This 207-nucleotide RNA was probed chemically with 2A3. The RNA was probed in 150 mM KOAc, 10 mM MgCl2 and 150 mM bicine (pH 8.5) at 24 C. For 2A3 the reverse transcriptase was SuperScript II with manganese. It was measured as part of the RMDB library OK3TST. The 2A3 profile rests on 510 reads.
[RMDB]
RNA sequence: GGGAACGACUCGAGUAGAGUCGAAAAGUUCAUCGAUCUCUAUAAUAUCUAGUUUCUUGCGUUUCACAAACACAGGCUCGUCUCUCGCGAUGAGAUCUGUAUAGUAACUAUGUAAAUGAUAACUAGAUAGAAAGAUGUAGCUAUAUAGAUGACGAUCCCCCAUGCGUAUGUUCGCAUACGCAUGGGGAAAAGAAACAACAACAACAAC
Reactivity to 2A3 in 0.01 (KOAc 150mM, MgCl2 10mM, bicine 150mM(pH8.5), 24C), signal-to-noise 1, nucleotides 027 to 156: g000u080u100c010a030u000c000g060a180u030c000u000c050u080a010u020a110a110u020a020u010c000u030a000g030u000u020u020c000u100u010g050c010g050u000u020u120c190a030c030a010a090a050c030a050c000a020g020g030c000u000c000g000u000c000u010c030u130c150g040c140g000a000u020g000a010g010a220u000c020u040g000u000a010u010a050g050u010a050a010c080u030a010u240g030u050a010a120a150u200g010a010u020a070a000c000u000a000g000a000u000a000g020a020a070a020g060a010u210g040u120a010g050c000u000a000u010a020u090a230g030a010u030g010a000c030g010a030u000c000